The record gives the reactivity of an RNA of 177 nucleotides to 2A3. The reactions ran in a buffer of 150 mM KOAc, 10 mM MgCl2 and 150 mM bicine (pH 8.5), at 24 C. It was measured as part of the RMDB library RFM100. 2A3 is a SHAPE reagent: it acylates the 2'-hydroxyl of flexible nucleotides of all four kinds. For 2A3, 636 sequencing reads were counted.
RNA sequence: GGGAACGACUCGAGUAGAGUCGAAAACGAUGCUGAAUGACGUCGGCGGCAGCGACUUUUUCAGAAUGAGUUCAUCAUACCCAUUCACAUAGCCAAAAUAGUUAUGAUCGGAAGGAUAACUGUCUACAAUUCGAGUCCAGUUCGCUGGACUCGAAUUAAAAGAAACAACAACAACAAC
Reactivity to 2A3 in 0.01 (KOAc 150mM, MgCl2 10mM, bicine 150mM(pH8.5), 24C), signal-to-noise 2, nucleotides 027 to 126: c060g000a020u070g000c000u010g000a030a120u070g070a000c070g100u000c030g030g080c020g020g000c010a030g040c030g010a000c010u140u010u000u000u000c070a040g010a050a020u140g070a160g080u120u070c020a050u000c000a030u100a260c010c040c000a040u060u020c080a060c010a090u070a010g010c010c000a070a030a040a000u140a130g020u140u040a050u070g040a080u050c110g020g030a050a000g040g000a050u040a050a100c000u040g000u050c020u050a120c010